Conditions: 150 mM KOAc, 10 mM MgCl2 and 150 mM bicine (pH 8.5), 24 C. Structure probing data (DMS and 2A3) for a 207-nucleotide construct. DMS adducts were read by reverse transcription with MarathonRT. The DMS profile rests on 6,569 reads. Values cover nucleotides 27 to 156.
RNA sequence: GGGAACGACUCGAGUAGAGUCGAAAAGCGUACUACGUAAGACAUGCUAUGACAAGUCAGACAACAGCUUUCCCAAAUAGGAAAGACAUGUCUGUCACCCAUAGCAACAGCUUACGUAUCGCAAAUCUUCGCGUCCUCUUCGGAGGACGCGAAGAAACGUAACUACUAGUUUCGACUAGUAGUUACGAAAAGAAACAACAACAACAAC
Reactivity to DMS in 0.01 (KOAc 150mM, MgCl2 10mM, bicine 150mM(pH8.5), 24C), signal-to-noise 3, nucleotides 027 to 156: g010c010g040u000a030c070u000a020c000g000u000a000a010g010a050c030a300u010g010c010u000a030u010g000a040c080a060a120g030u010c000a030g010a010c000a030a100c090a180g000c000u000u000u000c000c010c010a050a210a280u010a050g000g000a010a020a020g010a040c050a300u010g010u000c010u010g010u010c020a150c150c030c000a040u010a020g000c010a020a090c090a130g010c010u010u000a010c020g010u000a000u010c020g020c020a060a060a110u000c000u000u000c000g040c000g020u010c000c000u000c000u000u000c300g060g010a020g020g010a000c000g040c010g000a000a000g000a010a060a070
Reactivity to 2A3 in 0.01 (KOAc 150mM, MgCl2 10mM, bicine 150mM(pH8.5), 24C), signal-to-noise 6, nucleotides 027 to 156: g020c010g030u100a110c050u000a000c040g020u000a010a000g030a080c050a140u060g000c000u000a000u010g000a040c040a220a300g000u010c000a000g000a010c010a130a020c030a090g040c010u010u000u010c020c020c020a200a260a170u300a060g010g010a010a000a000g010a060c050a100u050g000u000c000u000g020u020c020a050c020c030c010a000u000a000g000c020a030a080c060a060g030c000u000u000a000c000g010u000a020u150c000g000c000a040a040a120u010c000u000u000c000g000c000g000u000c010c010u010c000u060u080c250g090g000a000g000g000a000c000g000c000g000a000a000g010a000a000a000